RNA sequence: GGGAACGACUCGAGUAGAGUCGAAAAAGUUAGGUUCGCUAUGGUGCAACUAUUUAAGGCAAUAACGAACUAAUUCUAAGCAAGUAAUGGAGAAAUGCCAGGGUCACUAUCUAGCCAUAAUAGUGCUGUAAGUGACUUAGAUUCGUCUAAGUCACAACAAUAGCGCAACUUUCGAGUUGCGCUAUUGAAAAGAAACAACAACAACAAC
Reactivity to DMS in 0.01 (KOAc 150mM, MgCl2 10mM, bicine 150mM(pH8.5), 24C), signal-to-noise 3, nucleotides 027 to 156: a050g030u000u000a050g020g010u000u000c020g050c020u000a030u010g010g000u000g000c030a150a130c100u010a100u010u010u000a140a120g030g010c030a080a040u000a010a030c000g000a010a040c010u000a030a090u000u000c020u010a070a130g040c060a040a070g010u000a040a090u000g000g010a100g010a090a050a090u000g020c000c030a120g010g000g010u000c020a060c040u000a030u000c050u000a080g040c040c070a060u000a040a070u000a060g000u000g040c040u000g020u000a040a120g010u000g000a020c000u000u000a010g010a080u000u010c300g030u000c000u000a010a010g000u000c000a010c030a040a090
Reactivity to 2A3 in 0.01 (KOAc 150mM, MgCl2 10mM, bicine 150mM(pH8.5), 24C), signal-to-noise 6, nucleotides 027 to 156: a000g080u050u030a060g020g100u010u010c030g000c030u040a020u060g140g080u140g050c030a140a050c070u130a160u150u220u170a120a040g060g000c020a020a010u050a040a030c020g000a000a000c000u020a010a030u090u070c080u080a040a050g020c050a090a010g040u140a080a080u100g050g020a030g050a110a090a010u080g020c020c020a040g020g010g040u070c000a000c030u010a030u050c020u060a030g020c010c010a010u030a100a030u040a060g080u040g040c050u050g040u110a150a040g000u000g000a000c000u000u000a010g010a020u010u030c120g000u000c170u000a000a000g000u010c000a000c000a000a010